Chemical mapping of a 177-nucleotide RNA with DMS and 2A3. 2A3 adducts were read by reverse transcription with SuperScript II with manganese. The DMS profile rests on 2,629 reads. For 2A3, 2,256 sequencing reads were counted. Source: RMDB library TTRDEL, as collected in RNAgym.
[RMDB]
RNA sequence: GGGAACGACUCGAGUAGAGUCGAAAAGAUAUGGAUUCAGCGAAGAACGUAUCGGGUCGGAAACGACCUUACGGGAGCUGGUCCUAAGUCAAAGGAACGAGCGUCAGUUCGCUGACGCUCGUUCCAAGAUACACGAAUACUUCGGUAUUCGUGUAUCAAAAGAAACAACAACAACAAC
Reactivity to DMS in 0.01 (KOAc 150mM, MgCl2 10mM, bicine 150mM(pH8.5), 24C), signal-to-noise 2, nucleotides 027 to 126: g010a030u010a300u020g000g010a010u000u020c000a020g020c000g000a170a150g010a120a140c010g010u000a010u010c200g000g000g000u000c010g010g000a060a080a200c000g000a010c000c010u000u000a000c000g000g000g010a060g000c000u000g010g000u000c000c010u000a020a110g010u010c040a060a100a090g010g020a010a010c000g020a020g000c000g000u010c010a020g010u000u020c210g010c000u020g000a000c000g000c010u000c000g020u000u010c000c000a010a010
Reactivity to 2A3 in 0.01 (KOAc 150mM, MgCl2 10mM, bicine 150mM(pH8.5), 24C), signal-to-noise 2, nucleotides 027 to 126: g040a020u120a000u120g040g000a050u300u300c010a010g030c090g230a300a030g040a110a040c010g000u020a040u250c140g000g040g000u020c040g060g020a050a030a050c000g010a010c000c020u000u020a000c000g000g000g000a040g000c010u000g000g000u000c000c000u010a140a020g090u020c030a070a040a120g000g000a000a030c000g000a020g000c030g020u040c000a030g010u100u080c250g010c240u000g000a000c000g010c050u000c000g010u020u000c000c000a010a000